The record gives the reactivity of an RNA of 177 nucleotides to DMS and 2A3.
The reactions ran in a buffer of 150 mM KOAc, 10 mM MgCl2 and 150 mM bicine (pH 8.5), at 24 C.
In probing experiments dimethyl sulfate is read out at A N1 and C N3, which are open when not base-paired.

[RMDB]
RNA sequence: GGGAACGACUCGAGUAGAGUCGAAAAAGACUCCUUACCAAGUACUUAGGGGGUGGAGAGUAGUAGGAGUGUUGGAGAAGCCCGGUGCUCCUAUGAAAUCUGGAAAAUCCUGAGGCUGAAAGGUGAGAGAGAAGGUGAAAUUCGUUUCACCUUCUCUAAAAGAAACAACAACAACAAC
Reactivity to DMS in 0.01 (KOAc 150mM, MgCl2 10mM, bicine 150mM(pH8.5), 24C), signal-to-noise 4, nucleotides 027 to 126: a100g010a220c030u010c010c010u010u020a030c030c020a130a020g000u010a100c010u000u000a020g000g010g000g000g010u030g000g000a020g010a090g000u000a080g010u000a010g000g000a010g010u000g010u010u000g000g010a220g020a160a220g020c240c000c000g000g000u010g010c000u000c000c000u000a010u000g000a070a110a120u010c010u000g000g030a090a070a080a120u020c000c000u000g000a020g000g000c020u000g000a090a080a060g000g020u000g000a030g010
Reactivity to 2A3 in 0.01 (KOAc 150mM, MgCl2 10mM, bicine 150mM(pH8.5), 24C), signal-to-noise 6, nucleotides 027 to 126: a020g130a050c010u010c000c000u000u010a020c010c000a040a010g020u160a300c010u020u000a020g010g010g020g010g030u060g000g000a000g000a000g000u000a000g000u000a000g000g000a020g000u020g050u020u010g060g030a260g040a280a080g160c010c000c000g000g000u000g010c000u000c000c000u000a000u000g010a000a000a010u000c000u020g040g050a060a080a010a080u020c000c000u000g000a010g020g000c010u060g050a130a080a030g010g000u030g000a020g000
The data come from the RNA Mapping Database (RMDB), libraries RFM100 and RFMREP.